RNA sequence: GGGAACGACUCGAGUAGAGUCGAAAAGAUAUGGAUUUGUGGUAGCUAGCCUCGCGUUGAAAGGCUUAUCGGAAACGAUAAGCCUGGAGCGAGAACAAUAGCUAGCUAUAAUCACAAAUCCUAAGUCCAUGCUUUCCUUGUUCGCAAGGAAAGCAUGAAAAGAAACAACAACAACAAC
Reactivity to DMS in 0.01 (KOAc 150mM, MgCl2 10mM, bicine 150mM(pH8.5), 24C), signal-to-noise 1, nucleotides 027 to 126: g030a080u040a300u000g000g000a000u000u010u000g100u030g020g000u000a000g010c000u000a020g040c000c000u000c000g000c020g020u000u010g000a130a160a030g000g000c000u040u010a000u000c010g000g010a140a020a090c000g010a000u000a000a010g010c000c000u000g000g000a040g030c000g030a020g020a130a060c220a030a210u040a300g000c010u000a000g000c000u000a060u000a300a090u020c000a000c000a000a000a000u000c000c000u010a010a080g000u000c020